[RMDB]
RNA sequence: GGGAACGACUCGAGUAGAGUCGAAAAUUGUCGGAUAAUUCGAAAGAGAUAUGAUUUGAUCUGUUAUCCGUGGAUGUGAUAUCAUGUCUUGAAAUUCAGGUGAGGAUUCAACCCAAGGGCAAAGAAACGUAAUGCCUAAUUUCGAUUAGGCAUUACGAAAAGAAACAACAACAACAAC
Reactivity to DMS in 0.01 (KOAc 150mM, MgCl2 10mM, bicine 150mM(pH8.5), 24C), signal-to-noise 4, nucleotides 027 to 126: u000u010g000u020c020g020g020a030u020a020a060u020u000c180g000a040a060a170g010a000g010a070u020a020u000g000a070u000u010u030g010a100u000c020u010g010u010u010a050u010c080c040g010u010g000g010a050u000g000u050g010a130u000a030u000c020a010u000g000u000c010u000u020g000a070a080a100u030u010c050a050g000g030u000g000a100g000g000a090u020u000c080a040a080c050c010c080a060a060g000g010g000c090a030a080a060g010a080a050a130
Reactivity to 2A3 in 0.01 (KOAc 150mM, MgCl2 10mM, bicine 150mM(pH8.5), 24C), signal-to-noise 5, nucleotides 027 to 126: u050u070g050u030c020g000g020a040u070a090a080u210u090c110g080a140a070a140g030a050g020a010u020a030u090g060a040u100u100u170g050a020u040c010u040g060u090u130a030u040c050c040g030u050g020g000a080u050g120u110g110a050u040a010u140c010a050u040g030u000c000u040u080g060a120a100a090u140u070c050a060g020g030u020g100a040g050g020a030u120u000c020a030a090c000c010c010a000a060g050g010g020c100a110a100a030g070a050a080a000